The record gives the reactivity of an RNA of 207 nucleotides to 2A3 and DMS. For 2A3, 1,258 sequencing reads were counted.

[RMDB]
RNA sequence: GGGAACGACUCGAGUAGAGUCGAAAAAGUUUGUAUAAGCACUGUUUAAACGUCCCAGUGCAUGCCAAUUGGUGUUUACAGACGAGUAUGGUAUUGACCAUAUGAUACUAUUCUCUCUCUCAGGAGAGGAGAAUAGAUAACUACAAAGGACGUACAAAAUAUUAUAGGCGUUCGCGCCUAUAAUAUUAAAAGAAACAACAACAACAAC
Reactivity to 2A3 in 0.01 (KOAc 150mM, MgCl2 10mM, bicine 150mM(pH8.5), 24C), signal-to-noise 3, nucleotides 027 to 156: a000g030u070u010u000g080u010a070u020a260a000g010c000a000c000u010g090u020u140u180a130a090a000c000g000u010c030c030c000a000g000u010g000c040a020u070g000c010c020a280a300u200u300g060g000u050g040u100u070u030a030c010a010g000a030c000g020a020g040u000a000u020g030g000u060a200u180u260g130a040c010c000a000u000a010u030g030a010u060a060c000u000a010u010u000c000u000c000u000c000u000c000u030c130a170g040g140a040g030a000g000g040a030g000a010a000u000a000g000a000u070a030a040c070u160a050c060a040a120a010g000g000a000c000g000u010a000c030a010a280
Reactivity to DMS in 0.01 (KOAc 150mM, MgCl2 10mM, bicine 150mM(pH8.5), 24C), signal-to-noise 2, nucleotides 027 to 156: a170g020u000u000u000g040u010a080u000a140a160g000c000a020c000u000g000u000u000u000a080a130a080c000g030u000c000c030c020a080g080u000g040c010a130u000g000c050c050a140a200u000u000g010g010u000g010u000u000u000a170c050a130g030a100c100g020a240g010u000a000u020g020g000u000a130u000u010g070a130c000c020a020u000a020u000g000a190u000a090c000u010a010u000u000c010u000c000u000c000u000c030u000c250a210g050g000a020g010a040g010g010a010g040a010a010u000a010g010a110u010a020a160c050u000a130c100a080a100a070g000g000a030c010g020u010a070c070a120a080
The data come from the RNA Mapping Database (RMDB), library OK3TST. Reactivities are rounded to 0.1 and cut off at 0 and 3. Conditions: 150 mM KOAc, 10 mM MgCl2 and 150 mM bicine (pH 8.5), 24 C. For DMS the reverse transcriptase was MarathonRT.